[RMDB]
RNA sequence: GGGAACGACUCGAGUAGAGUCGAAAAAUCGCGUAUGCGAGAGUAGUGCCAACAUAUUGUGCUCUUUGAUUUUUUGGCAACCCAAAAUGGUGGCGGAUGAACGAGAUGAUAAUAUAUUCAAGUUGCCUGGGUCAAGAACGUUCGCGUUCUUGACCCAAAAAGAAACAACAACAACAAC
Reactivity to DMS in 0.01 (KOAc 150mM, MgCl2 10mM, bicine 150mM(pH8.5), 24C), signal-to-noise 1, nucleotides 027 to 126: a020u000c010g010c050g010u010a040u030g090c010g000a010g010a140g020u000a030g000u000g000c020c010a060a020c130a030u010a090u000u000g010u010g010c130u000c040u010u000u000g000a030u000u000u000u000u000u000g000g030c070a020a110c060c010c040a100a030a100a110u000g050g040u000g000g000c030g010g010a060u000g000a080a080c050g000a150g000a080u000g030a060u010a070a100u010a090u010a090u010u000c130a030a170g020u010u000g000c030c040
The record gives the reactivity of an RNA of 177 nucleotides to DMS. For DMS the reverse transcriptase was MarathonRT. The reactions ran in a buffer of 150 mM KOAc, 10 mM MgCl2 and 150 mM bicine (pH 8.5), at 24 C.